[RMDB]
RNA sequence: GGGAACGACUCGAGUAGAGUCGAAAAAUUAAGCCAGCCUAAAUGAAGAGCAGGACAAAAGGUUCGUCUGCAAACACUCCAUGGUAGACAGAGGAUGGGGAAAUGGAUGUGGACUAUUUGGAAGUAACACGAAUAACUUCUUCGGAAGUUAUUCGUGAAAAGAAACAACAACAACAAC
Reactivity to 2A3 in 0.01 (KOAc 150mM, MgCl2 10mM, bicine 150mM(pH8.5), 24C), signal-to-noise 1, nucleotides 027 to 126: a000u100u080a080a010g030c010c010a030g020c000c010u130a130a110a080u150g080a080a090g000a010g000c010a040g020g040a070c080a050a230a010a000g000g000u060u040c040g040u040c010u050g020c000a000a050a000c020a010c010u060c020c020a050u050g070g060u080a030g050a060c000a010g130a020g080g050a040u030g030g000g040g090a000a150a000u050g070g010a010u050g010u040g010g010a040c040u030a090u050u120u100g080g010a130a060g030u070a050a000
Reactivity to DMS in 0.01 (KOAc 150mM, MgCl2 10mM, bicine 150mM(pH8.5), 24C), signal-to-noise 2, nucleotides 027 to 126: a110u000u000a060a100g020c010c010a050g020c020c020u000a020a110a090u010g000a030a120g000a120g000c030a040g030g000a070c040a050a040a110a100g010g010u000u000c130g000u000c010u000g000c010a040a050a110c060a040c090u000c020c020a040u010g000g010u000a090g000a060c110a090g000a050g000g000a030u000g020g000g000g020a020a060a090u000g020g010a120u000g040u000g000g000a100c080u000a130u000u000u000g000g000a070a050g010u000a100a160

Structure probing data (2A3 and DMS) for a 177-nucleotide construct. The 2A3 profile rests on 960 reads. The DMS profile rests on 1,075 reads.